[RMDB]
RNA sequence: GGGAACGACUCGAGUAGAGUCGAAAACUCAUUAAGAACGGAGAAGUAUCCAUUACGAAAGACGGGAUCGCAGUCUUUAUGAUUCAUAGUAAUCGUUAGUUCCGAAGUUGAGAUGGAUUCACUGAGACCGGUAGUGGUCGUCCGAGUACACGAUGUGAUCAGAGUCGAUUUUCGAAUCGACUCUGAUAAAAGAAACAACAACAACAAC
Reactivity to 2A3 in 0.01 (KOAc 150mM, MgCl2 10mM, bicine 150mM(pH8.5), 24C), signal-to-noise 2, nucleotides 027 to 156: c020u010c030a090u070u100a150a060g040a140a030c020g000g020a040g020a220a030g040u050a020u010c020c050a010u140u150a060c100g080a070a070a010g150a030c010g040g030g010a010u110c080g000c140a070g020u040c000u150u200u000a100u190g000a010u000u000c050a070u230a130g120u300a020a000u010c030g010u050u050a030g020u100u000c000c000g070a100a080g060u030u100g060a070g050a080u040g010g010a000u130u160c080a060c050u010g040a050g070a130c030c000g040g030u100a080g120u080g120g000u020c010g020u000c030c020g030a040g080u090a010c090a030c060g080a080u120g040u060g190
Reactivity to DMS in 0.01 (KOAc 150mM, MgCl2 10mM, bicine 150mM(pH8.5), 24C), signal-to-noise 1, nucleotides 027 to 156: c010u000c070a120u000u010a140a110g000a060a090c060g000g000a140g000a200a020g040u000a080u000c030c020a130u000u000a110c040g000a110a010a100g010a150c010g000g000g010a100u000c080g000c100a100g030u000c040u000u000u000a080u000g000a050u000u030c010a100u000a140g020u000a020a020u000c010g010u000u000a120g000u000u000c040c010g060a080a250g000u000u010g000a250g000a060u000g000g010a070u010u000c060a090c060u000g000a160g030a080c000c010g000g020u000a050g010u000g000g010u000c040g030u000c050c010g000a120g000u000a100c040a050c030g010a040u000g000u020g000
Conditions: 150 mM KOAc, 10 mM MgCl2 and 150 mM bicine (pH 8.5), 24 C. This 207-nucleotide RNA was probed chemically with 2A3 and DMS.